[RMDB]
RNA sequence: GGGAACGACUCGAGUAGAGUCGAAAACGCACGCCUACUGCGGCCGAGUGCCUGCGCGCCGUCCCGAUGUCACAGCCAGACACCGGCGAGCUCACCUUGAAGGCGUUGCGCGACAACGGCAUUGAUGCCCCUUGAUCACGUUCGCGUGAUCAAGGGGAAAAGAAACAACAACAACAAC
Reactivity to DMS in 0.01 (KOAc 150mM, MgCl2 10mM, bicine 150mM(pH8.5), 24C), signal-to-noise 1, nucleotides 027 to 126: c010g010c010a020c050g000c010c030u030a090c060u010g010c050g000g010c020c050g080a060g080u000g000c050c010u000g060c060g010c040g060c050c060g010u000c050c010c000g000a030u010g020u000c030a070c150a250g000c060c070a050g000a020c060a010c020c010g000g000c050g020a060g030c080u000c040a100c110c120u060u000g010a150a030g020g020c010g020u000u000g030c000g010c010g000a120c070a040a070c060g000g000c030a130u000u010g000a180u000g010
Reactivity to 2A3 in 0.01 (KOAc 150mM, MgCl2 10mM, bicine 150mM(pH8.5), 24C), signal-to-noise 2, nucleotides 027 to 126: c000g000c000a000c000g040c000c000u070a070c040u290g300c020g080g000c020c000g070a130g000u020g020c000c010u120g020c130g000c040g000c060c030g050u040c000c020c000g010a100u070g100u130c010a020c050a110g000c030c010a030g030a010c010a000c020c030g010g000c000g010a050g000c030u050c070a160c090c010u040u100g070a090a020g000g000c000g030u040u150g010c010g000c000g020a010c000a100a030c010g050g000c060a040u030u120g060a060u150g100